[RMDB]
RNA sequence: GGGAACGACUCGAGUAGAGUCGAAAAGAAGCGACGGGUCUGCAGUUGAGGCAGAAAUUGCUGCUUUGACAGCACAUUGUGCCCUGCUUUCAAGUGGGGCCCAAGAACAAGUCGUGCAGACGAGGGGAUGAUUUACCUGAUUCGUCAGGUAAAUCAUAAAAGAAACAACAACAACAAC
Reactivity to 2A3 in 0.01 (KOAc 150mM, MgCl2 10mM, bicine 150mM(pH8.5), 24C), signal-to-noise 9, nucleotides 027 to 126: g090a060a020g030c030g050a040c030g040g010g040u030c040u040g010c020a050g010u050u060g040a020g020g000c020a000g070a080a170a050u210u240g090c000u000g000c000u060u040u090g040a050c010a020g010c040a020c020a110u020u020g010u020g010c000c010c000u010g000c000u100u300u240c180a200a020g000u010g000g000g000g000c000c030c010a030a020g040a040a030c070a120a010g020u030c030g050u060g020c030a020g010a060c030g020a060g000g010g000g020
Reactivity to DMS in 0.01 (KOAc 150mM, MgCl2 10mM, bicine 150mM(pH8.5), 24C), signal-to-noise 9, nucleotides 027 to 126: g010a130a160g020c020g010a040c050g010g000g010u010c100u000g020c020a070g010u010u000g010a020g010g010c010a010g000a090a120a110u050u030g010c000u000g000c000u010u020u010g000a030c010a070g010c040a050c210a110u000u010g000u000g000c010c000c000u000g000c010u000u060u060c270a110a050g020u000g000g000g000g000c000c020c000a010a030g010a150a110c160a080a110g000u010c030g020u000g000c070a050g000a050c050g000a080g000g010g000g020